[RMDB]
RNA sequence: GGGAACGACUCGAGUAGAGUCGAAAAGAUAUGGAUCGUGAACUACCAUUAGUUGUCGGAAACGACAACUUUAUGGCACGAGUCCUAAGUCAAAACACGUGAUAUGCCUUCGGGCAUAUCACGUGAACAGAACCAUGAUCUUCGGAUCAUGGUUCUGAAAAGAAACAACAACAACAAC
Reactivity to 2A3 in 0.01 (KOAc 150mM, MgCl2 10mM, bicine 150mM(pH8.5), 24C), signal-to-noise 1, nucleotides 027 to 126: g050a030u020a000u170g030g000a020u030c000g020u040g040a070a070c080u180a100c300c020a000u010u030a020g010u000u000g010u050c000g000g010a100a040a010c000g010a000c000a000a010c000u000u040u020a090u020g000g000c080a010c010g000a040g250u190c010c000u020a060a000g140u090c050a080a000a000a100c000a010c000g020u000g020a000u000a000u000g010c040c020u080u080c300g050g000g000c000a000u000a000u000c000a000c010g000u000g040a000a000
Reactivity to DMS in 0.01 (KOAc 150mM, MgCl2 10mM, bicine 150mM(pH8.5), 24C), signal-to-noise 2, nucleotides 027 to 126: g010a050u010a300u010g010g000a270u000c000g000u010g020a050a050c090u040a300c010c000a000u010u000a010g000u010u010g000u000c000g000g000a100a060a210c000g000a000c000a010a000c000u000u000u000a000u000g020g000c000a010c000g000a010g010u010c010c000u000a010a170g000u000c020a030a120a110a180c000a000c000g000u000g010a020u000a000u000g000c000c000u000u030c250g030g010g030c000a010u000a000u000c000a000c000g000u000g010a050a090